RNA sequence: GGGAACGACUCGAGUAGAGUCGAAAAAGUAAACAAAAUCCCUUGCGCCAAGCAUCUAGCAGGCACAGUAGGUACUGCUAUGCACCUGUGCCCUUGGUUUCCUUAAGUUCUGGCCAAGAGCUUUAGGCAACUGGGACCUUCUCAAGGGCAGGGACAAAUUAUCGUCCAUCUUCGGAUGGACGAUAAUAAAAGAAACAACAACAACAAC
Reactivity to 2A3 in 0.01 (KOAc 150mM, MgCl2 10mM, bicine 150mM(pH8.5), 24C), signal-to-noise 3, nucleotides 027 to 156: a000g120u130a090a040a030c080a060a080a030a110u060c010c000c060u050u090g080c100g000c020c030a160a040g000c000a030u040c050u090a010g000c000a000g060g050c140a040c080a090g300u300a130g060g180u090a110c000u000g000c010u020a010u040g000c020a070c030c020u100g100u150g110c000c020c000u000u070g000g000u000u030u010c010c000u000u020a000a010g000u000u000c030u030g150g090c100c040a050a000g000a000g000c000u020u010u010a010g010g030c010a000a010c010u020g040g000g010a010c010c020u220u210c110u040c050a040a040g010g010g000c000a010g010g010g010a020c050a000a150
Reactivity to DMS in 0.01 (KOAc 150mM, MgCl2 10mM, bicine 150mM(pH8.5), 24C), signal-to-noise 1, nucleotides 027 to 156: a200g030u000a040a070a210c090a090a090a140a120u010c000c020c010u010u010g020c040g030c040c050a090a180g010c020a070u000c040u040a030g010c010a060g060g000c080a140c010a170g010u020a100g030g000u000a040c020u020g010c000u000a020u000g010c020a120c030c000u010g000u010g000c010c040c010u000u000g120g020u000u010u000c000c000u010u010a090a030g030u000u000c030u000g020g030c150c140a060a070g030a050g020c030u000u000u010a070g020g020c020a030a010c040u040g000g020g000a040c000c010u000u000c080u000c040a060a070g000g000g010c020a040g000g000g000a040c060a040a050